[RMDB]
RNA sequence: GGGAACGACUCGAGUAGAGUCGAAAACGAGAGAGUUCGCUCUCUCGAAAAAAGCGUACUACGGUACGGUGCGCAGAUACUACCCACCAUUUCCCAAAUAGGAAAUGAGGUGUAGCAUUGUACCGUAUCGCAAAAAAUGAGUCCUUCGGGACUCAAACGUUAGCCCCAGAUUCGUCUGGGGCUAACGAAAAGAAACAACAACAACAAC
Reactivity to 2A3 in 0.01 (KOAc 150mM, MgCl2 10mM, bicine 150mM(pH8.5), 24C), signal-to-noise 1, nucleotides 027 to 156: c010g010a040g000a000g000a020g020u230u150c130g080c000u000c000u000c000u020c040g000a030a000a000a000a000a000g030c040g000u070a040c000u020a030c000g000g000u010a000c010g000g000u010g000c070g020c020a000g070a270u230a200c060u130a120c030c000c000a070c000c000a020u000u010u000c000c000c030a300a280a000u300a140g010g010a000a000a000u020g000a010g000g030u090g010u000a020g000c000a000u010u020g230u070a000c010c010g000u020a050u160c090g000c180a000a160a000a000a000a000u150g000a000g000u010c000c040u040u000c240g120g000g000a000c000u020c000a020a020a000

The record gives the reactivity of an RNA of 207 nucleotides to 2A3. The reactions ran in a buffer of 150 mM KOAc, 10 mM MgCl2 and 150 mM bicine (pH 8.5), at 24 C.